Structure probing data (2A3) for a 207-nucleotide construct. The reactions ran in a buffer of 150 mM KOAc, 10 mM MgCl2 and 150 mM bicine (pH 8.5), at 24 C. The 2A3 profile rests on 762 reads. Reactivities are given for positions 27 through 156.
[RMDB]
RNA sequence: GGGAACGACUCGAGUAGAGUCGAAAAACGAGGUACGCCUCGAAAAUAUGACCGGUGUCAUAGCCUCUAGCACACAGAGGUCGCGUGGGUUCAACUCCCCCCCUUUUCCGAGGGUAUCGGGAACCAAAAAACACAAUUUGGUUCGCCAAAUUGUGAACAAGGACUAGACGUUCGCGUCUAGUCCUUGAAAAGAAACAACAACAACAAC
Reactivity to 2A3 in 0.01 (KOAc 150mM, MgCl2 10mM, bicine 150mM(pH8.5), 24C), signal-to-noise 1, nucleotides 027 to 156: a010c010g000a020g000g030u070a030c160g110c000c000u000c000g020a120a020a000a060u090a070u060g030a000c000c070g050g090u230g020u140c020a050u030a050g010c000c020u000c020u030a080g070c110a000c000a000c000a140g080a000g070g010u030c000g000c010g000u120g030g040g000u090u140c000a030a080c100u010c010c000c000c010c000c000c020u000u010u020u040c000c000g000a000g030g000g000u070a020u010c000g000g010g000a000a000c050c040a020a030a010a070a090a010c000a000c000a000a000u000u000u000g000g000u000u050c060g040c030c010a000a000a010u000u000g000u000g000a000a020